[RMDB]
Chemical mapping of a 177-nucleotide RNA with 2A3 and DMS. High 2A3 reactivity points to a flexible backbone, as in loops and unpaired stretches. The data come from the RNA Mapping Database (RMDB), library RFM100. Conditions: 150 mM KOAc, 10 mM MgCl2 and 150 mM bicine (pH 8.5), 24 C. 2A3 adducts were read by reverse transcription with SuperScript II with manganese. Reactivities are rounded to 0.1 and cut off at 0 and 3. For 2A3, 1,400 sequencing reads were counted.
RNA sequence: GGGAACGACUCGAGUAGAGUCGAAAAGUGGCGGGCGCUUGUGAGUCAGCUUCUUGACGGUAGAUAAGUGUGGAUGGAGUGAGAGGAGGAGUCCUGUGUAUGUCGUUGUCAACGUCGACCGAGCGUCAACACACGGAGACUUCGGUCUCCGUGUGUUAAAAGAAACAACAACAACAAC
Reactivity to 2A3 in 0.01 (KOAc 150mM, MgCl2 10mM, bicine 150mM(pH8.5), 24C), signal-to-noise 3, nucleotides 027 to 126: g080u060g010g000c010g060g010g000c020g030c070u070u070g020u030g090a070g040u050c020a020g000c000u100u050c030u050u100g040a010c030g040g050u080a050g070a060u080a070a100g050u030g020u090g090g020a030u040g030g030a040g020u090g040a060g000a050g010g030a010g000g010a010g040u010c000c010u060g010u030g030u080a120u100g010u040c020g040u010u030g010u010c020a070a000c060g020u020c030g000a060c000c030g050a030g000c000g080u020c030
Reactivity to DMS in 0.01 (KOAc 150mM, MgCl2 10mM, bicine 150mM(pH8.5), 24C), signal-to-noise 1, nucleotides 027 to 126: g000u010g000g030c080g010g000g010c010g000c010u040u030g000u000g000a240g010u000c050a030g000c140u020u020c050u000u000g000a110c080g000g040u000a070g010a070u010a050a110g030u000g050u030g000g000a070u000g050g000a070g000u070g000a070g030a020g000g000a100g000g000a070g030u020c050c000u030g030u000g040u010a050u000g000u000c040g010u010u000g000u010c100a080a050c110g000u010c020g000a090c020c020g000a010g020c060g000u000c030